[RMDB]
RNA sequence: GGGAACGACUCGAGUAGAGUCGAAAAGAUAUGGACAUGUCACAUUGCUAGUCGGGAGGUCGGAAACGACCUAACGACUUGGACCAAUGUGAGCAUGUCCUAAGUCAAACGUCGCUUCGGCGACGAAGUGUGUACUCGUGUUCGCACGAGUACACACAAAAGAAACAACAACAACAAC
Reactivity to 2A3 in 0.01 (KOAc 150mM, MgCl2 10mM, bicine 150mM(pH8.5), 24C), signal-to-noise 1, nucleotides 027 to 126: g030a030u090a030u140g000g010a000c000a000u030g000u070c000a010c010a000u000u050g040c000u030a010g050u010c010g000g010g010a010g020g030u000c030g000g000a060a130a070c010g000a010c020c000u000a000a010c000g000a000c000u000u040g000g040a030c100c030a020a000u000g030u020g030a060g080c000a010u000g000u010c000c000u010a040a010g010u010c030a070a060a070c010g000u000c000g000c000u080u040c280g160g000c000g000a000c000g000a090a020
Reactivity to DMS in 0.01 (KOAc 150mM, MgCl2 10mM, bicine 150mM(pH8.5), 24C), signal-to-noise 2, nucleotides 027 to 126: g000a030u000a300u020g010g000a000c000a000u000g020u040c010a000c000a010u000u010g000c030u010a060g010u000c000g000g000g020a020g000g030u000c000g000g000a150a130a210c030g010a010c000c000u000a050a050c000g010a010c010u000u010g020g000a150c300c020a000a010u000g000u000g000a130g010c020a010u000g000u000c000c000u000a000a130g010u000c030a050a100a220c060g020u020c010g030c000u020u000c270g030g020c010g010a000c000g000a010a060